[RMDB]
RNA sequence: GGGAACGACUCGAGUAGAGUCGAAAAAUCUUACCUGAAUUGGUACGCCGUGGGGUUCGCCCGGAUAUGGUGACCGACCAAACCAGUGCCCAUGAUCCGCUGAAUGGCUAUCUGCCAAAAGGUUGGAGAUAUACCUCUCGUUCGCGAGAGGUAUAUCAAAAGAAACAACAACAACAAC
Reactivity to DMS in 0.01 (KOAc 150mM, MgCl2 10mM, bicine 150mM(pH8.5), 24C), signal-to-noise 4, nucleotides 027 to 126: a080u000c080u000u010a080c060c010u000g000a170a150u020u000g000g010u010a080c120g020c030c030g020u000g020g000g010g020u000u000c120g020c050c020c010g000g030a090u000a060u000g010g000u000g010a090c060c060g010a070c050c030a050a060a080c100c020a030g010u000g000c000c000c020a080u000g010a160u000c010c010g000c050u000g000a100a210u000g000g000c010u000a120u010c200u000g000c010c010a010a030a090a150g010g010u000u000g040g010a100
Reactivity to 2A3 in 0.01 (KOAc 150mM, MgCl2 10mM, bicine 150mM(pH8.5), 24C), signal-to-noise 4, nucleotides 027 to 126: a000u050c030u050u060a090c010c000u050g110a260a160u090u050g030g020u010a080c040g020c010c020g040u060g040g050g010g000u080u100c100g060c010c030c000g040g030a140u160a070u130g010g000u020g040a050c020c060g050a030c020c030a050a000a050c020c010a050g020u020g100c020c020c000a040u090g040a070u050c010c000g000c040u020g040a090a050u020g020g000c010u050a140u210c110u210g020c000c000a010a030a020a020g090g000u110u200g060g010a050